[RMDB]
RNA sequence: GGGAACGACUCGAGUAGAGUCGAAAAGUGUAUAGGCAAACCGACCCUCCGCCUAUACACGAAUUAAGGAGGGUGGAGAUCUUAUGCUCGCGAUCUUACGUCACGAGCGAAGGCCUGCGGCUCGUGACGGAUCUUACGCAGGCCAUAGCGAGCUACAAGUCGAUAUUAUAUUCGUAUAAUAUCGACUAAAAGAAACAACAACAACAAC
Reactivity to 2A3 in 0.01 (KOAc 150mM, MgCl2 10mM, bicine 150mM(pH8.5), 24C), signal-to-noise 6, nucleotides 027 to 156: g010u000g000u000a000u000a000g020g000c070a110a110a120c100c060g090a110c020c010c000u030c030c030g010c000c000u000a000u000a000c000a000c010g020a020a040u180u110a060a050g040g000a000g000g020g000u030g020g040a050g010a030u030c020u070u170a080u230g010c010u020c010g000c010g030a050u040c030u090u200a040c010g000u000c000a000c010g000a010g010c030g010a050a020g010g000c000c010u020g000c010g060g000c000u000c000g010u000g010a000c000g000g010a010u050c040u070u130a030c030g000c010a000g000g000c000c000a000u010a020g010c010g010a000g000c010u040a050c060a110
Reactivity to DMS in 0.01 (KOAc 150mM, MgCl2 10mM, bicine 150mM(pH8.5), 24C), signal-to-noise 3, nucleotides 027 to 156: g020u000g020u000a010u000a020g010g000c030a040a060a080c030c030g010a160c010c010c010u000c020c020g040c000c000u000a020u000a000c000a010c020g010a040a070u000u000a120a140g010g020a040g060g100g010u000g020g000a090g010a090u000c030u000u000a100u000g010c000u010c000g030c010g010a050u010c080u000u010a130c050g010u000c000a020c010g010a030g040c010g000a030a050g030g000c030c000u000g020c000g020g010c020u010c010g010u000g010a080c030g020g000a030u000c080u000u000a110c090g010c010a030g020g010c000c040a090u010a030g030c020g000a050g010c010u000a100c090a090